[RMDB]
RNA sequence: GGGAACGACUCGAGUAGAGUCGAAAAUAGUACUUGUACUACAGAAUUAACUGCCGUGUGCCGCCCGCUAAACUAGCCCCAAUCAUCGAAAAUGGAGAAACCGACAGUGCACGUUGACGUAGACCCCCUUGCUCCGAUUUUUCGAAAUCGGAGCAAGAAAAGAAACAACAACAACAAC
Reactivity to 2A3 in 0.01 (KOAc 150mM, MgCl2 10mM, bicine 150mM(pH8.5), 24C), signal-to-noise 1, nucleotides 027 to 126: u120a000g020u050a050c020u090u150g010u080a050c010u000a010c020a020g100a140a260u240u040a110a060c040u010g010c010c010g020u040g020u020g070c040c000g000c000c000c010g030c030u050a090a000a000c010u000a000g000c020c020c000c000a000a030u070c020a030u090c050g140a050a170a010a000u050g100g000a030g030a060a020a000c010c000g030a000c010a000g000u030g000c020a000c080g010u020u040g010a010c010g000u060a010g060a050c000c000c000c000
Reactivity to DMS in 0.01 (KOAc 150mM, MgCl2 10mM, bicine 150mM(pH8.5), 24C), signal-to-noise 2, nucleotides 027 to 126: u030a030g020u000a020c010u020u030g090u030a010c050u000a030c060a090g040a160a050u000u050a130a150c070u010g020c070c010g020u000g000u010g020c010c030g030c010c030c030g030c050u010a050a090a110c110u020a110g000c000c000c000c040a060a020u010c030a040u000c060g030a030a010a110a070u050g010g030a100g020a040a090a050c160c120g000a010c050a040g000u000g000c080a110c090g010u000u000g000a100c210g020u000a040g000a110c000c000c000c030
Chemical mapping of a 177-nucleotide RNA with 2A3 and DMS. For DMS the reverse transcriptase was MarathonRT. Values cover nucleotides 27 to 126.